Chemical mapping of a 177-nucleotide RNA with 2A3. Values cover nucleotides 27 to 126. Source: RMDB library OK1LIB, as collected in RNAgym.
RNA sequence: GGGAACGACUCGAGUAGAGUCGAAAAGACCCCAGAACUGGGGAGGCCGCAUCCCAUCACGAAUCAGCACGUCACGGAUGGUGGUGUAGAUUUUCAUGAAAUCGGUCUCGUUGUCCGUGCGCAUGUAGUCACCCUGCGUAUUCGUACGCAGGGUGACAAAAGAAACAACAACAACAAC
Reactivity to 2A3 in 0.01 (KOAc 150mM, MgCl2 10mM, bicine 150mM(pH8.5), 24C), signal-to-noise 2, nucleotides 027 to 126: g000a020c000c000c000c000a030g130a240a160c270u040g000g040g000g020a030g030g060c180c000g000c070a010u000c000c080c000a050u210c050a000c090g170a080a140u120c000a010g060c050a000c060g090u130c080a020c000g020g030a080u050g000g180u130g010g010u070g040u060a020g000a060u000u000u030u300c210a140u300g180a020a020a040u090c150g090g120u000c030u000c030g070u020u020g000u080c000c010g000u000g000c020g010c000a000u020g080u090a100